This 177-nucleotide RNA was probed chemically with DMS and 2A3. For DMS, 4,162 sequencing reads were counted. Values are in units of 0.01, from 0 to 300, in steps of 10. Conditions: 150 mM KOAc, 10 mM MgCl2 and 150 mM bicine (pH 8.5), 24 C. For DMS the reverse transcriptase was MarathonRT.
RNA sequence: GGGAACGACUCGAGUAGAGUCGAAAACUUUAUAAUAGUUGAAGGUUGGAGAGUCGUGCAGAUAUCAAAUGCCAACACUAUAUUCGGCGUUUCAUUGAGGUUAUCGUUAGACAUUGGCGACGUAAUCCAACAGCUUUUGAUUCGUCAAAAGCUGUUGAAAAGAAACAACAACAACAAC
Reactivity to DMS in 0.01 (KOAc 150mM, MgCl2 10mM, bicine 150mM(pH8.5), 24C), signal-to-noise 3, nucleotides 027 to 126: c020u010u020u070a090u010a130a080u020a010g010u000u010g040a150a210g000g000u000u000g000g010a250g010a070g030u000c030g040u040g000c110a170g020a030u000a060u010c030a040a120a140u010g000c030c040a010a160c120a050c100u010a070u010a080u010u010c130g010g000c060g000u000u000u000c100a070u010u020g000a130g010g010u000u030a060u030c010g010u000u000a030g020a080c170a140u000u000g020g000c020g020a040c060g010u010a020a110u030c000
Reactivity to 2A3 in 0.01 (KOAc 150mM, MgCl2 10mM, bicine 150mM(pH8.5), 24C), signal-to-noise 4, nucleotides 027 to 126: c010u080u110u070a290u150a270a100u110a060g020u040u000g090a150a050g080g010u040u040g020g080a060g000a020g050u010c000g000u060g110c070a020g010a040u060a070u130c030a000a000a120u060g010c000c000a060a000c080a040c080u060a050u070a130u260u150c030g040g020c020g060u000u000u000c120a170u090u120g040a050g060g070u080u050a030u110c010g030u030u050a020g030a170c060a160u050u140g030g000c000g010a030c020g040u040a020a050u010c010